[RMDB]
Structure probing data (DMS and 2A3) for a 177-nucleotide construct. Reactivities are rounded to 0.1 and cut off at 0 and 3. For DMS the reverse transcriptase was MarathonRT. The DMS profile rests on 2,627 reads. 2A3 is a SHAPE reagent: it acylates the 2'-hydroxyl of flexible nucleotides of all four kinds. For 2A3, 6,502 sequencing reads were counted.

RNA sequence: GGGAACGACUCGAGUAGAGUCGAAAAGAUAUGGAGAAAUGCAAGGAUUUUAACUACCCACCUCGGAAACGAGAGGUUGGGAUCUGAUGACCAUUUCUCCUAAGUCAAAGGAGGCUUCGGCCUCCAACGUCAUUACAUUGUUCGCAAUGUAAUGACGAAAAGAAACAACAACAACAAC
Reactivity to DMS in 0.01 (KOAc 150mM, MgCl2 10mM, bicine 150mM(pH8.5), 24C), signal-to-noise 3, nucleotides 027 to 126: g020a050u010a140u000g000g020a020g000a030a010a000u000g000c010a020a050g000g010a050u000u000u000u000a000a020c030u000a110c050c040c080a300c150c000u000c000g000g000a110a080a140c020g010a010g030a090g000g020u000u000g000g010g000a000u000c000u010g010a040u030g000a160c300c000a000u000u000u000c010u000c000c000u000a020a070g010u000c120a030a140a120g000g000a010g000g010c010u000u020c160g040g000c000c000u000c000c000a010a020
Reactivity to 2A3 in 0.01 (KOAc 150mM, MgCl2 10mM, bicine 150mM(pH8.5), 24C), signal-to-noise 4, nucleotides 027 to 126: g040a050u200a170u190g010g000a020g010a000a030a000u030g010c060a090a250g050g000a030u060u050u070u100a100a070c040u180a160c040c000c050a050c030c010u000c000g020g050a110a110a060c030g000a030g000a020g110g010u040u030g010g030g000a010u000c000u170g190a300u100g000a020c010c010a010u000u010u000c000u000c010c000u030a080a010g050u050c060a080a080a110g010g000a000g010g000c000u050u080c300g150g000c050c000u000c010c010a000a000